[RMDB]
RNA sequence: GGGAACGACUCGAGUAGAGUCGAAAAGAGGGGAAAAGGAAAGCGAGAAAGAAACAUCGAAUAACGUCCUCAUACUAAGUUUGCUUGUAUUUUGUAGCAUAUUUGGAUUCUGCGUUUUCGAAACAUGGCUUAGACUUAUGUUCGCAUAAGUCUAAGCAAAAGAAACAACAACAACAAC
Reactivity to DMS in 0.01 (KOAc 150mM, MgCl2 10mM, bicine 150mM(pH8.5), 24C), signal-to-noise 4, nucleotides 027 to 126: g010a070g010g000g020g000a100a070a100a100g000g000a040a080a080g010c090g010a080g010a030a050a080g020a080a070a070c140a120u000c010g000a020a010u000a020a040c050g010u000c080c060u000c070a070u010a090c030u010a010a040g000u010u000u010g010c020u010u000g020u010a140u000u010u010u010g010u000a040g000c010a000u000a010u000u000u000g000g010a140u000u000c080u010g000c010g010u020u000u000u010c000g010a060a060a070c250a110u020g020
Reactivity to 2A3 in 0.01 (KOAc 150mM, MgCl2 10mM, bicine 150mM(pH8.5), 24C), signal-to-noise 3, nucleotides 027 to 126: g020a000g020g020g010g030a040a050a010a020g060g010a060a000a040g080c040g030a030g110a050a100a010g090a010a110a020c020a060u030c010g010a020a030u080a090a010c010g020u050c000c020u000c020a030u030a080c020u040a030a020g020u040u050u040g020c000u040u030g070u150a210u150u250u120u210g160u080a000g020c010a010u010a020u020u010u060g000g010a040u140u010c020u070g010c000g000u020u010u000u010c010g000a000a020a080c080a090u110g080